[RMDB]
RNA sequence: GGGAACGACUCGAGUAGAGUCGAAAAUAUUCCGCCCAAUAGUCCCGGAAAAUUGCAAUUGAACACCGUCCUGAAUCACAUUACUAAGAGAGGUCCCUUCUUAGGUAAUAAUGCGGGGAUUCUCGCACCAUUAGGUCCAUUUCGAUGGACCUAAUGGAAAAGAAACAACAACAACAAC
Reactivity to 2A3 in 0.01 (KOAc 150mM, MgCl2 10mM, bicine 150mM(pH8.5), 24C), signal-to-noise 6, nucleotides 027 to 126: u180a070u060u010c020c000g030c010c000c000a040a030u110a060g040u060c020c020c000g050g060a080a040a030a070u140u130g060c040a080a140u030u080g030a100a000c030a020c050c020g050u050c020c020u040g040a050a050u130c030a030c030a120u020u140a050c040u070a100a000g030a000g000a020g050g050u030c000c010c000u030u030c000u010u020a030g020g040u010a030a100u070a050a040u100g010c020g020g020g030g060a110u190u070c010u000c000g000c000a040
Reactivity to DMS in 0.01 (KOAc 150mM, MgCl2 10mM, bicine 150mM(pH8.5), 24C), signal-to-noise 3, nucleotides 027 to 126: u030a160u010u010c010c070g000c020c010c020a080a050u010a080g010u000c010c010c000g000g020a070a050a000a080u000u010g040c070a060a080u030u010g010a130a070c120a030c060c060g000u010c000c010u000g000a120a090u020c110a040c080a030u000u000a110c030u000a030a020g010a020g000a080g040g030u000c010c000c000u030u000c010u010u000a050g000g020u010a030a030u010a080a110u020g000c020g050g020g000g000a190u000u010c000u010c020g000c110a210